[RMDB]
RNA sequence: GGGAACGACUCGAGUAGAGUCGAAAAAGCACGACGAGCCGAGAAUGCACGUCACAUCAUCGGUAUCACGGAAUACAUCCUGACCCUCGCGCUCUCGGAUGACGAAGGGUUUAGUGUGCAGGUUCCAGAGCCAGGAGUGGAGGGCCGGAUAGGGACACUAUACUAAUUCGUUCGCGAAUUAGUAUAGAAAAGAAACAACAACAACAAC
Reactivity to 2A3 in 0.01 (KOAc 150mM, MgCl2 10mM, bicine 150mM(pH8.5), 24C), signal-to-noise 5, nucleotides 027 to 156: a000g090c060a040c040g110a020c040g000a020g000c010c010g010a010g030a080a050u070g020c090a030c100g110u070c080a010c000a050u050c010a020u010c010g030g010u090a120u300c030a020c070g070g080a090a050u150a150c030a060u030c000c010u140g170a300c000c010c000u020c010g120c010g000c030u000c000u060c070g040g020a070u090g040a030c050g070a050a060g050g020g000u050u070u140a080g010u060g030u050g050c050a020g010g070u050u020c020c040a030g020a000g040c000c000a020g030g010a020g010u050g020g030a010g000g010g010c010c020g000g010a010u070a090g020g010g000a010c020a000
Reactivity to DMS in 0.01 (KOAc 150mM, MgCl2 10mM, bicine 150mM(pH8.5), 24C), signal-to-noise 2, nucleotides 027 to 156: a130g030c020a040c030g000a220c050g030a300g020c000c010g030a080g020a130a050u020g040c000a160c190g010u020c170a080c030a070u000c060a150u000c000g000g020u000a040u000c040a190c040g010g010a100a110u010a050c050a080u000c090c000u020g020a030c000c010c000u010c010g030c010g020c030u000c020u010c050g040g030a090u010g010a050c030g040a060a060g020g020g010u010u010u000a040g030u000g030u000g010c100a110g030g010u010u000c040c070a180g000a200g000c010c050a080g020g000a060g010u010g020g010a060g000g010g050c020c020g000g000a060u000a030g030g010g010a050c030a120
Source information: This 207-nucleotide RNA was probed chemically with 2A3 and DMS. Values cover nucleotides 27 to 156. The RNA was probed in 150 mM KOAc, 10 mM MgCl2 and 150 mM bicine (pH 8.5) at 24 C. The 2A3 profile rests on 3,786 reads. The data come from the RNA Mapping Database (RMDB), library OK3TST.